[RMDB]
RNA sequence: GGGAACGACUCGAGUAGAGUCGAAAAGGGGUCACCCAUCAGGUCGUCACCAGGAGCUUGGAUUUAUAGUGCUGAAGCCUCCACGGCACUAUUGUCAGCUCCUGCAAGUCGACCUGCGUGGGUGACGGAGGCACCCAAAGAUCGGUUUCGACCGAUCCAGGAUGUGUAAGUUCGCUUACACAUCCUGAAAAGAAACAACAACAACAAC
Reactivity to DMS in 0.01 (KOAc 150mM, MgCl2 10mM, bicine 150mM(pH8.5), 24C), signal-to-noise 2, nucleotides 027 to 156: g000g020g030g000u000c010a040c000c010c000a030u010c030a000g010g010u000c000g020u000c020a250c210c000a020g010g010a020g010c000u000u010g030g030a080u000u000u000a030u000a020g030u000g020c020u000g010a010a150g010c030c000u000c010c010a300c010g000g000c010a000c010u020a010u010u010g000u000c020a090g020c000u000c000c000u000g000c030a050a130g040u000c010g010a030c000c000u010g010c140g010u000g010g000g030u000g000a010c000g000g020a060g070g020c040a160c000c010c010a060a110a120g010a030u000c000g030g010u000u000u000c300g020a130c000c000g020a010u010c000
Reactivity to 2A3 in 0.01 (KOAc 150mM, MgCl2 10mM, bicine 150mM(pH8.5), 24C), signal-to-noise 6, nucleotides 027 to 156: g040g010g010g010u020c000a010c000c000c000a010u020c000a000g000g010u000c010g060u070c040a100c300c010a020g010g010a000g000c110u240u250g200g000a060u130u300u040a020u060a000g000u010g000c000u010g040a170a030g020c010c000u010c020c010a040c020g010g000c010a000c000u000a000u010u040g030u020c050a000g010c000u000c010c010u010g010c020a100a300g060u050c000g000a000c000c000u000g000c050g020u000g000g000g000u000g000a000c000g000g000a000g000g010c030a060c000c000c000a030a050a020g000a000u010c000g000g050u030u220u230c180g080a040c000c000g020a000u000c000